RNA sequence: GGGAACGACUCGAGUAGAGUCGAAAAUUAAAAUGAUCGCAGCUGAAAUGGCGGACCCUAUGGUCUCCCUGACGGGAGGGACUCCAGUCCAAAGAGUCGACUAUCCCACCAUAAGUUUGCCAAAAAAUCAUGAGGUACAGUUCGCUGUACCUCAUGAAAAAGAAACAACAACAACAAC
Reactivity to DMS in 0.01 (KOAc 150mM, MgCl2 10mM, bicine 150mM(pH8.5), 24C), signal-to-noise 1, nucleotides 027 to 126: u000u000a040a050a030a090u030g030a060u030c080g000c090a080g010c030u000g000a050a100a050u010g000g020c010g020g010a060c030c070c170u000a030u000g000g000u020c000u020c020c000c000u000g030a130c250g000g070g060a020g000g010g010a000c000u020c030c070a140g030u010c070c100a110a100a210g010a030g000u010c000g000a170c110u000a140u000c020c000c020a090c080c030a000u000a030a040g010u000u020u030g000c030c060a000a020a070a000a010a090